The data come from the RNA Mapping Database (RMDB), libraries RFM100 and RFMREP. Structure probing data (2A3 and DMS) for a 177-nucleotide construct.

[RMDB]
RNA sequence: GGGAACGACUCGAGUAGAGUCGAAAAUGAACAAUCGGCACAUUUUUGAUGUGUGAAUUAUGAGAAAUUUUAUGCACGAAUCGUAUAUCAUACGACAGUCCAUCAAAGUUUCUGACCUAUCAGGUUCAUACUGUUGACUCUUCGGAGUCAACAGUAUAAAAGAAACAACAACAACAAC
Reactivity to 2A3 in 0.01 (KOAc 150mM, MgCl2 10mM, bicine 150mM(pH8.5), 24C), signal-to-noise 6, nucleotides 027 to 126: u080g010a030a040c040a030a100u110c020g060g020c000a010c010a020u020u090u090u160u300g100a060u030g010u010g010u010g050a090a110u180u110a140u260g130a040g010a030a020a010u010u020u010u010a010u010g020c030a000c020g020a050a030u010c010g000u000a010u020a020u120c130a040u050a020c000g020a030c020a010g010u000c050c000a020u050c080a000a010a020g020u000u000u000c040u050g090a090c010c000u110a110u150c100a040g000g090u030u010c000
Reactivity to DMS in 0.01 (KOAc 150mM, MgCl2 10mM, bicine 150mM(pH8.5), 24C), signal-to-noise 4, nucleotides 027 to 126: u020g000a090a100c060a110a170u000c100g000g030c000a010c000a000u000u000u060u030u080g000a020u010g010u000g000u010g010a100a040u020u010a050u000g000a030g000a020a020a010u000u010u000u000a020u010g010c300a020c010g000a060a300u000c000g000u000a010u010a110u010c260a090u000a000c000g000a010c030a260g000u000c170c000a020u020c200a010a010a010g000u010u000u000c000u010g000a100c040c050u000a120u020c070a150g000g020u000u000c110

The reactions ran in a buffer of 150 mM KOAc, 10 mM MgCl2 and 150 mM bicine (pH 8.5), at 24 C.